[RMDB]
The record gives the reactivity of an RNA of 177 nucleotides to DMS and 2A3.
The 2A3 profile rests on 3,523 reads.
RNA sequence: GGGAACGACUCGAGUAGAGUCGAAAAACAAUCUGGUUCGCCAGAUUGUCAAUGUCUUCCUAAAAUCCUUGGAAGAGUGUAUAUAUAGAAUAAAGGUCGAAAGUACCUGUGCUUUCGAGCACAGGAAGUUUCUAGCUAGUUUCGACUAGCUAGAAACAAAAGAAACAACAACAACAAC
Reactivity to DMS in 0.01 (KOAc 150mM, MgCl2 10mM, bicine 150mM(pH8.5), 24C), signal-to-noise 2, nucleotides 027 to 126: a040c000a010a000u010c000u000g000g000u000u010c220g050c000c000a000g000a020u000u000g020u000c090a080a020u000g000u010c010u000u010c000c000u000a000a000a000a150u010c010c010u000u010g000g010a010a020g010a060g020u010g000u010a070u000a100u010a180u020a110g010a120a090u010a040a120a030g010g010u010c200g010a080a060a050g010u010a090c000c000u000g000u000g000c000u000u000u020c200g020a010g010c000a000c000a010g000g000a030a040
Reactivity to 2A3 in 0.01 (KOAc 150mM, MgCl2 10mM, bicine 150mM(pH8.5), 24C), signal-to-noise 4, nucleotides 027 to 126: a000c000a010a000u010c000u010g030g020u010u050c130g050c040c000a000g010a000u000u000g000u000c020a000a050u100g060u010c000u000u030c000c000u000a000a000a000a130u030c010c010u010u020g010g000a000a010g010a010g020u070g040u000a150u000a060u010a030u060a270g070a190a080u210a290a200a010g020g000u020c030g030a110a090a020g060u060a070c000c010u000g000u010g010c000u110u070u180c300g040a000g010c000a000c010a000g000g000a000a010